Conditions: 150 mM KOAc, 10 mM MgCl2 and 150 mM bicine (pH 8.5), 24 C. This 177-nucleotide RNA was probed chemically with DMS. The data come from the RNA Mapping Database (RMDB), library M2PK90.
[RMDB]
RNA sequence: GGGAACGACUCGAGUAGAGUCGAAAAAAAAAGGAAGUAUCGCCUAAUGGUAGGGCAGCAGCUUGGAAAGCUGUGGGCGGCAACGUCUUGUGGGUUCGAUUCCCACUACUUCCGCCAAAUAAAAAAACAUGGUUAAGUGGUUCGCCACUUAACCAUGAAAAGAAACAACAACAACAAC
Reactivity to DMS in 0.01 (KOAc 150mM, MgCl2 10mM, bicine 150mM(pH8.5), 24C), signal-to-noise 2, nucleotides 027 to 126: a060a060a030a150a150g000g000a000a000g000u000a020u000c020g020c000c000u000a020a050u000g010g020u000a010g020g000g000c000a180g000c010a010g010c010u020u010g000g000a160a040a080g020c000u000g020u010g000g000g010c000g010g000c290a070a040c010g010u000c010u000u030g000u010g000g010g010u000u000c000g010a300u000u000c000c000c000a010c000u000a000c010u000u000c000c010g020c070c030a030a090a070u030a020a000a020a020a020a070a090